[RMDB]
RNA sequence: GGGAACGACUCGAGUAGAGUCGAAAAUUUUGAGCUUUCGAGCUCAAAACAACUGGUGUCCCGACCAGGAAAAACAGAUUUACACGAAGUGAUAGAUCGAAAGGGCCACCAUGUUCGCAUGGUGGAACCUCCCACACUAAUUCGUUAGUGUGGGAGGAAAAGAAACAACAACAACAAC
Reactivity to DMS in 0.01 (KOAc 150mM, MgCl2 10mM, bicine 150mM(pH8.5), 24C), signal-to-noise 4, nucleotides 027 to 126: u000u000u000u010g000a010g000c010u000u000u030c160g020a020g020c000u000c000a000a000a030a030c240a110a120c020u000g010g010u000g000u000c000c000c000g010a140c010c000a020g000g000a060a070a050a090a050c170a140g010a010u000u000u000a010c030a020c010g000a140a130g010u000g010a150u000a010g000a000u000c010g000a070a110a090g020g010g000c000c000a010c000c000a000u000g000u000u010c210g020c000a000u000g010g020u000g000g010a020a040
Reactivity to 2A3 in 0.01 (KOAc 150mM, MgCl2 10mM, bicine 150mM(pH8.5), 24C), signal-to-noise 4, nucleotides 027 to 126: u010u010u010u010g000a000g000c010u080u040u190c280g070a000g000c000u000c000a000a000a000a000c010a060a130c010u010g000g000u010g040u010c000c000c000g010a010c000c000a010g100g090a030a110a020a000a010c040a020g020a020u010u000u080a010c080a020c150g250a300a060g000u020g070a160u020a030g020a010u020c040g030a110a050a020g080g030g030c000c000a000c000c000a000u000g020u030u030c180g000c110a000u010g000g000u000g000g010a000a000
An RNA of 177 nucleotides, treated with DMS and 2A3 and read out base by base. For DMS the reverse transcriptase was MarathonRT. For 2A3 the reverse transcriptase was SuperScript II with manganese.